[RMDB]
The data come from the RNA Mapping Database (RMDB), library OK3TST.
Structure probing data (2A3 and DMS) for a 207-nucleotide construct.
In probing experiments dimethyl sulfate is read out at A N1 and C N3, which are open when not base-paired.
The reactions ran in a buffer of 150 mM KOAc, 10 mM MgCl2 and 150 mM bicine (pH 8.5), at 24 C.
For DMS, 8,453 sequencing reads were counted.
RNA sequence: GGGAACGACUCGAGUAGAGUCGAAAAACAGUUACUAUCAUUUUCAUAGUCCACACCUCUCUCUUAUCUCUGCUUCUGUGAAUACCAAGCGACAAGAAAGACAUACAUAAUGACUUUUUAUGCCCUUAGCUUCUGGUACAAUCGGUCCUCCACAUUCCUGUUAUAUCAGUUUCGACUGAUAUAACAGAAAAGAAACAACAACAACAAC
Reactivity to 2A3 in 0.01 (KOAc 150mM, MgCl2 10mM, bicine 150mM(pH8.5), 24C), signal-to-noise 9, nucleotides 027 to 156: a000c060a050g060u130u100a040c050u050a060u130c060a130u100u110u120u130c060a070u090a060g040u040c030c020a050c010a030c070c010u010c010u000c000u000c010u080u070a090u070c030u010c020u070g020c000u080u030c020u040g070u040g080a060a030u050a090c020c000a030a020g020c010g060a050c030a060a030g050a070a040a010g040a020c020a030u120a030c020a030u170a170a060u170g070a090c020u050u070u000u020u070a080u140g020c020c010c000u020u050a020g010c000u060u030c030u070g040g000u050a040c040a020a110u070c040g010g000u010c010c010u020c030c020a060c010a070u130u110c030
Reactivity to DMS in 0.01 (KOAc 150mM, MgCl2 10mM, bicine 150mM(pH8.5), 24C), signal-to-noise 3, nucleotides 027 to 156: a080c040a100g010u010u000a090c030u010a070u010c040a120u010u010u000u010c020a090u000a090g010u000c020c020a060c030a060c020c010u000c030u000c030u010c030u000u000a090u010c020u000c020u000g030c030u000u000c050u000g000u010g020a120a100u000a080c040c040a060a110g020c040g010a090c020a060a070g010a060a040a030g010a090c040a070u000a110c170a100u000a080a040u000g010a090c050u000u000u000u000u010a070u040g010c020c010c030u000u010a090g050c050u000u000c030u010g020g030u000a050c070a040a120u000c010g020g030u010c000c010u010c020c020a060c040a250u000u000c010